[RMDB]
RNA sequence: GGGAACGACUCGAGUAGAGUCGAAAAGGACCCCACUCCUGCGAGACAGGAGUAAUCCUAAACAGGGUUUUCACCCUUCCUUUAGUUUCCUUCCUCUCCUGGAGAGGUCUUCUGCCCUAGCCCGGUCGAAUGUAAACACGUUCGCGUGUUUACAUUCAAAAGAAACAACAACAACAAC
Reactivity to 2A3 in 0.01 (KOAc 150mM, MgCl2 10mM, bicine 150mM(pH8.5), 24C), signal-to-noise 2, nucleotides 027 to 126: g010g020a020c030c000c020c000a070c000u000c000c000u030g010c150g090a050g030a070c170a110g030g000a000g010u000a000a010u020c010c010u030a060a030a060c300a150g030g000g020u090u060u210u280c110a060c000c000c000u010u000c000c000u000u010u000a020g010u010u070u000c010c000u010u040c010c010u000c000u010c000c010u000g000g020a000g000a000g000g000u000c000u040u000c020u040g000c000c010c010u020a050g040c000c000c030g030g080u060c090
Reactivity to DMS in 0.01 (KOAc 150mM, MgCl2 10mM, bicine 150mM(pH8.5), 24C), signal-to-noise 3, nucleotides 027 to 126: g010g000a030c020c010c070c210a100c020u000c000c000u000g000c130g000a040g010a100c150a010g000g000a020g020u000a020a020u010c140c020u000a010a030a020c220a030g000g010g020u000u000u010u020c190a090c000c000c000u000u000c030c010u000u000u000a020g000u000u000u000c020c000u000u000c040c030u000c020u000c000c010u000g000g010a030g010a090g000g000u000c000u000u000c050u010g010c030c010c010u010a120g020c020c010c040g020g000u000c150